An RNA of 177 nucleotides, treated with DMS and read out base by base. Reactivities are rounded to 0.1 and cut off at 0 and 3. For DMS, 2,720 sequencing reads were counted. The reactions ran in a buffer of 150 mM KOAc, 10 mM MgCl2 and 150 mM bicine (pH 8.5), at 24 C. For DMS the reverse transcriptase was MarathonRT.

RNA sequence: GGGAACGACUCGAGUAGAGUCGAAAAGAUAUGGACGGGAAAUCGAAGGUGGAUGUGCGAUAAGCAACACUCGGAAACGAGUGAAUUGCUUUUGACGCACGCCACCUUCGAUUUCCCGUCCUAAGUCGUAUUUUAACAACUUCGGUUGUUAAAAUACAAAAGAAACAACAACAACAAC
Reactivity to DMS in 0.01 (KOAc 150mM, MgCl2 10mM, bicine 150mM(pH8.5), 24C), signal-to-noise 2, nucleotides 027 to 126: g020a110u010a300u020g010g000a010c000g030g000g000a010a010a010u010c010g000a050a000g020g040u000g000g020a060u010g060u000g000c020g000a190u000a030a000g000c000a020a070c000a010c000u000c000g010g020a150a120a260c000g000a030g010u000g000a090a140u010u000g010c010u000u000u000u020g000a210c050g010c000a010c010g000c010c000a000c000c010u030u020c010g040a000u000u010u000c010c010c000g000u000c000c010u000a010a040g010u000c120
Values cover nucleotides 27 to 126.